[RMDB]
RNA sequence: GGGAACGACUCGAGUAGAGUCGAAAAGAUCUGUCUCGUUUGGAGAGAAGACAAAAGUUGAUCAAGCGAAGAGAGGUUCGUCUUAAAACACAAGAAUUGCGACAAAUAGAAGCAUCAGUUGCCAAGCCUGUAAUAGUCUCUUCGGAGACUAUUACAGAAAAGAAACAACAACAACAAC
Reactivity to DMS in 0.01 (KOAc 150mM, MgCl2 10mM, bicine 150mM(pH8.5), 24C), signal-to-noise 3, nucleotides 027 to 126: g010a090u000c020u000g000u010c010u000c010g020u010u000u010g020g020a180g010a160g020a150a110g000a080c080a080a060a110a120g020u010u020g020a110u000c050a060a050g010c060g010a030a040g010a060g000a070g020g020u000u000c090g010u000c010u000u020a050a070a050a130c110a090c080a060a100g010a040a060u000u000g020c030g000a080c100a060a050a080u010a110g020a050a160g000c050a040u010c080a090g010u000u000g000c010c050a050a110g020c250
Reactivity to 2A3 in 0.01 (KOAc 150mM, MgCl2 10mM, bicine 150mM(pH8.5), 24C), signal-to-noise 2, nucleotides 027 to 126: g010a030u010c000u030g210u060c000u020c040g010u080u060u100g060g020a110g040a020g030a170a030g060a020c030a040a260a010a050g110u090u110g050a080u050c040a030a000g010c010g060a130a070g020a030g010a000g040g040u060u080c010g050u000c030u000u110a150a190a020a010c080a020c020a010a080g040a150a080u080u120g000c040g020a040c090a020a150a040u180a070g090a070a010g000c000a010u030c030a010g030u040u040g010c030c010a090a010g000c010
An RNA of 177 nucleotides, treated with DMS and 2A3 and read out base by base. For 2A3 the reverse transcriptase was SuperScript II with manganese. For DMS, 1,975 sequencing reads were counted. The data come from the RNA Mapping Database (RMDB), library OK2TST.